Conditions: 150 mM KOAc, 10 mM MgCl2 and 150 mM bicine (pH 8.5), 24 C. The record gives the reactivity of an RNA of 207 nucleotides to 2A3.
RNA sequence: GGGAACGACUCGAGUAGAGUCGAAAAGCUUCGUUCGCGAAGCGAGGUGGGGUCCCUACAACAGCCGAGACAACAGCUAUACUGAAGCCUCCACGGUAUAGACAUGUACCUCGGACAUGUAGGGACGGAGGCACCCCCAAAACUCUUUCGAGAGUAAUCACCAUAGAUGCUUCGGCAUCUAUGGUGAAAAAGAAACAACAACAACAAC
Reactivity to 2A3 in 0.01 (KOAc 150mM, MgCl2 10mM, bicine 150mM(pH8.5), 24C), signal-to-noise 1, nucleotides 027 to 156: g000c000u000u000c000g040u020u060c160g020c020g170a020a000g010c000g000a040g020g030u220g010g070g000g000u030c000c000c000u030a020c020a100a010c050a050g190c000c000g030a000g000a050c120a100a000c000a110g010c010u000a000u000a010c010u010g060a190a060g050c000c010u050c040c000a050c010g000g040u000a000u000a000g040a040c030a140u050g000u120a200c030c000u040c010g110g020a040c030a040u040g000u000a000g010g000g020a000c000g000g010a000g010g080c010a030c000c030c000c000c000a020a070a010a150c020u000c000u010u120u220c210g080a030g010a050g010u110a040a140

For 2A3, 864 sequencing reads were counted. Reactivities are rounded to 0.1 and cut off at 0 and 3. It was measured as part of the RMDB library RNAMAK.